[RMDB]
RNA sequence: GGGAACGACUCGAGUAGAGUCGAAAACGGGUGGCACGCACGACGACUGGGACGAGUACGACCGGGUGAUGGCGCAGGAGCAGCGCGCCGUGGUGCUGAUCACGCCCACCCGCAUCUACAGCAACGGCGUAUAUCCUGCUUUCGAGCAGGAUAUACGAAAAGAAACAACAACAACAAC
Reactivity to DMS in 0.01 (KOAc 150mM, MgCl2 10mM, bicine 150mM(pH8.5), 24C), signal-to-noise 7, nucleotides 027 to 126: c060g000g010g020u000g000g010c050a120c100g010c030a050c040g010a120c050g020a070c030u010g000g000g020a120c080g010a160g010u000a070c090g010a180c220c010g010g000g010u000g000a140u000g010g000c010g020c110a120g010g000a110g010c090a050g010c060g010c010g010c060c080g010u010g010g020u000g000c010u000g000a100u000c080a130c070g000c050c000c010a020c010c010c000g000c060a050u000c030u000a040c060a100g000c060a050a070c070g000g000
Reactivity to 2A3 in 0.01 (KOAc 150mM, MgCl2 10mM, bicine 150mM(pH8.5), 24C), signal-to-noise 5, nucleotides 027 to 126: c010g020g010g010u010g030g000c050a010c070g040c000a020c030g170a010c030g010a010c040u060g030g070g090a070c060g040a080g070u090a100c070g040a070c050c050g000g000g040u110g040a200u110g020g010c020g000c050a080g020g150a120g060c050a010g010c010g000c010g010c030c030g000u040g060g010u030g010c030u050g020a100u080c030a020c070g010c000c000c000a020c010c000c010g000c010a070u070c020u090a120c020a020g050c010a070a030c020g090g010